[RMDB]
RNA sequence: GGGAACGACUCGAGUAGAGUCGAAAAGGCGCGUGUGAUCUGUCGCUGUGCGGAUCGCGCGCGCGAUCGUACUAGGAUCAUGAGCGACGUACAUGCGCGCGCGGAUCACGGCGCGGCCGGCGCGUAGUCCCAUACAUUGUUUCGACAAUGUAUGGGAAAAAGAAACAACAACAACAAC
Reactivity to DMS in 0.01 (KOAc 150mM, MgCl2 10mM, bicine 150mM(pH8.5), 24C), signal-to-noise 6, nucleotides 027 to 126: g010g010c000g010c010g030u000g010u010g010a020u000c010u000g010u010c030g020c040u000g010u010g010c160g010g000a080u000c010g010c010g010c020g010c010g010c000g010a010u000c130g020u000a050c060u010a200g000g000a090u000c130a110u010g010a120g000c040g010a100c170g000u000a060c060a080u000g010c010g010c010g010c010g030c010g020g000a060u010c030a040c020g000g010c010g010c120g010g000c110c020g010g000c010g000c020g020u010a070g000
Reactivity to 2A3 in 0.01 (KOAc 150mM, MgCl2 10mM, bicine 150mM(pH8.5), 24C), signal-to-noise 7, nucleotides 027 to 126: g150g000c010g000c010g000u040g080u100g050a180u040c020u050g150u220c030g000c080u060g050u070g060c060g070g070a100u060c010g010c000g010c000g000c000g010c000g030a020u020c070g000u010a030c020u050a060g160g090a140u170c060a170u290g160a040g170c060g050a050c060g010u020a010c020a060u070g010c010g000c000g000c030g010c000g030g000a010u030c010a020c050g020g000c010g000c010g010g010c010c010g010g000c000g000c000g000u010a040g100
Source information:
Source: RMDB library OK2TRN, as collected in RNAgym. An RNA of 177 nucleotides, treated with DMS and 2A3 and read out base by base. The 2A3 profile rests on 15,062 reads. For 2A3 the reverse transcriptase was SuperScript II with manganese.